[RMDB]
Record summary: The record gives the reactivity of an RNA of 177 nucleotides to 2A3 and DMS. The reactions ran in a buffer of 150 mM KOAc, 10 mM MgCl2 and 150 mM bicine (pH 8.5), at 24 C. For 2A3, 18,261 sequencing reads were counted. Values cover nucleotides 27 to 126. The DMS profile rests on 8,467 reads.
RNA sequence: GGGAACGACUCGAGUAGAGUCGAAAAGUCGUUAUAACCUUUCACGGCAAGACCACAUUCCAUACCGGCACGAACUUCAUCAACGACAUCUUUAUAACGACGUAAUGAUUCAAGUUCACCUUGGAAAGAUAAUAGCAGUGUUCGCACUGCUAUUAUCAAAAGAAACAACAACAACAAC
Reactivity to 2A3 in 0.01 (KOAc 150mM, MgCl2 10mM, bicine 150mM(pH8.5), 24C), signal-to-noise 9, nucleotides 027 to 126: g000u000c000g000u020u020a060u060a210a150c030c020u050u150u130c070a030c050g020g000c040a060a020g040a050c010c000a020c030a110u060u010c010c000a020u050a120c040c070g030g000c050a030c130g020a050a010c020u050u030c020a040u020c010a040a030c030g080a020c020a070u030c040u040u180u050a150u050a100a040c050g020a010c010g020u020a050a050u100g080a030u040u060c060a040a000g010u030u060c040a080c040c010u020u030g050g030a090a080a040
Reactivity to DMS in 0.01 (KOAc 150mM, MgCl2 10mM, bicine 150mM(pH8.5), 24C), signal-to-noise 7, nucleotides 027 to 126: g010u000c020g010u000u010a030u010a050a080c140c050u010u010u000c090a110c110g010g010c060a060a080g010a100c030c040a060c110a100u000u000c030c020a070u000a090c120c050g000g000c070a060c120g000a040a060c050u000u000c070a030u010c050a050a080c090g000a040c060a040u000c050u000u000u000a050u010a050a050c070g000a010c020g020u010a040a060u000g010a080u010u000c080a020a070g010u000u010c080a120c110c020u010u010g010g000a060a090a130